Source: RMDB library M2RFOK, as collected in RNAgym. Chemical mapping of a 207-nucleotide RNA with DMS and 2A3. Reactivities are rounded to 0.1 and cut off at 0 and 3. Conditions: 150 mM KOAc, 10 mM MgCl2 and 150 mM bicine (pH 8.5), 24 C. 2A3 adducts were read by reverse transcription with SuperScript II with manganese. Reactivities are given for positions 27 through 156.
[RMDB]
RNA sequence: GGGAACGACUCGAGUAGAGUCGAAAAUCAGAAUCAGGCCGGAGUGUUUAGCGCUCCGUAAACACGGUCGUACAUCCGGCCGGUAGCCUGGUUCCUUGCAUUGAGUGAUGUACGGAGUUUAUAGAGCAAAAGAAAGACCUGUUCGCAGGUCUUUCAACGUACUAUCGUUCUUCGGAACGAUAGUACGAAAAGAAACAACAACAACAAC
Reactivity to DMS in 0.01 (KOAc 150mM, MgCl2 10mM, bicine 150mM(pH8.5), 24C), signal-to-noise 1, nucleotides 027 to 156: u000c040a030g000a050a060u000c020a030g000g040c000c040g040g000a020g030u000g050u000u010u000a170g030c040g000c010u000c000c040g030u000a020a030a160c040a080c000g010g000u000c000g020u000a120c110a110u020c100c050g000g000c000c030g000g000u010a040g010c030c010u000g040g040u020u000c010c040u010u000g000c120a080u000u010g000a150g000u030g000a050u030g010u000a060c080g020g000a210g010u010u000u000a100u010a130g040a090g010c060a100a090a060a160g010a030a000a010g010a020c000c000u020g030u000u010c220g050c010a020g040g000u000c010u000u010u010c010a040a110
Reactivity to 2A3 in 0.01 (KOAc 150mM, MgCl2 10mM, bicine 150mM(pH8.5), 24C), signal-to-noise 3, nucleotides 027 to 156: u090c010a010g020a010a000u010c010a010g010g000c010c000g000g000a020g010u050g080u090u250u280a160g090c020g000c010u000c000c010g000u030a000a010a010c140a010c040g000g000u010c010g000u100a080c030a090u050c060c020g000g000c000c000g000g000u010a000g000c000c000u000g000g010u000u000c010c010u040u090g040c030a070u060u120g050a050g090u140g020a020u020g020u050a050c060g060g040a070g030u080u120u040a160u090a050g090a000g060c040a050a030a050a040g010a000a000a000g000a000c000c000u010g010u050u100c200g020c070a010g000g020u000c000u010u000u000c000a000a000